[RMDB]
RNA sequence: GGGAACGACUCGAGUAGAGUCGAAAACUCACCUGUCGUCGUCGACGAAGGCAUGUGAGCUUCCACUCGGUGAAGAGCGUCAGCGGACGGCCUCUGAGACGAGCGAUGGACAGUAGAGCUCGUCUCUCGAUAUUAGUCCCUUCGGGGACUAAUAUCGAAAAGAAACAACAACAACAAC
Reactivity to 2A3 in 0.01 (KOAc 150mM, MgCl2 10mM, bicine 150mM(pH8.5), 24C), signal-to-noise 3, nucleotides 027 to 126: c000u010c000a000c010c030u030g010u040c030g000u000c000g070u050c130g110a300c050g000a130a030g020g010c000a020u030g010u010g000a010g030c000u020u000c010c000a080c040u080c080g130g070u130g050a100a060g040a030g090c040g050u020c060a070g110c110g180g070a020c020g050g010c030c040u030c040u050g000a000g000a000c000g000a000g000c010g030a090u120g070g080a060c030a070g140u170a040g030a000g030c010u000c010g000u010c000u010c000u000
Reactivity to DMS in 0.01 (KOAc 150mM, MgCl2 10mM, bicine 150mM(pH8.5), 24C), signal-to-noise 2, nucleotides 027 to 126: c000u000c000a000c010c040u000g050u010c000g020u010c010g010u020c240g010a160c060g010a040a040g010g000c000a020u000g010u020g010a030g030c050u000u000c030c010a070c110u000c090g000g020u000g000a050a020g000a020g010c070g020u000c080a090g020c110g000g000a070c060g000g000c050c050u010c040u010g000a050g020a010c010g000a010g020c010g000a280u000g020g000a060c070a120g030u010a080g000a300g000c000u000c020g010u000c000u000c000u000
Conditions: 150 mM KOAc, 10 mM MgCl2 and 150 mM bicine (pH 8.5), 24 C.
This 177-nucleotide RNA was probed chemically with 2A3 and DMS.
Values cover nucleotides 27 to 126.
Reactivities are rounded to 0.1 and cut off at 0 and 3.
For 2A3, 2,727 sequencing reads were counted.
It was measured as part of the RMDB library VIROID.
2A3 adducts were read by reverse transcription with SuperScript II with manganese.